An RNA of 177 nucleotides, treated with 2A3 and DMS and read out base by base. Reactivities are given for positions 27 through 126. For DMS the reverse transcriptase was MarathonRT.
[RMDB]
RNA sequence: GGGAACGACUCGAGUAGAGUCGAAAACAUAAUCGGGUUAUAUCCCAAAGAACGAGAGAUGAAGACCAAAGCCAGAUUUUUCUCAUUGAUGUCGUAUAAAUUGAGGAUGUAUGUGACAUCCACCGAGCACAACGAUAGCGUUCGCGCUAUCGUUGUGAAAAGAAACAACAACAACAAC
Reactivity to 2A3 in 0.01 (KOAc 150mM, MgCl2 10mM, bicine 150mM(pH8.5), 24C), signal-to-noise 2, nucleotides 027 to 126: c050a060u180a080a060u060c040g000g020g070u080u060a110u000a080u130c000c020c000a050a030a000g030a030a020c120g000a000g000a000g010a050u020g030a060a030g010a020c040c060a220a030a010g060c010c000a050g010a060u000u050u040u080u010c020u000c030a050u020u110g060a020u030g050u000c010g040u060a030u010a120a080a070u100u130g070a050g110g060a050u030g010u020a010u050g140u020g040a000c000a000u000c040c030a010c030c040g040a030g050
Reactivity to DMS in 0.01 (KOAc 150mM, MgCl2 10mM, bicine 150mM(pH8.5), 24C), signal-to-noise 2, nucleotides 027 to 126: c070a070u000a120a030u020c040g000g000g010u000u000a130u000a140u000c000c000c000a090a100a130g020a050a050c130g000a020g030a060g000a070u000g000a210a110g010a050c060c090a010a090a110g020c070c030a040g010a110u000u000u000u010u000c030u010c010a070u000u020g000a060u000g020u000c000g000u000a030u010a010a070a150u000u000g050a090g030g040a020u020g010u000a030u000g000u010g000a050c010a000u030c000c250a100c060c070g010a090g020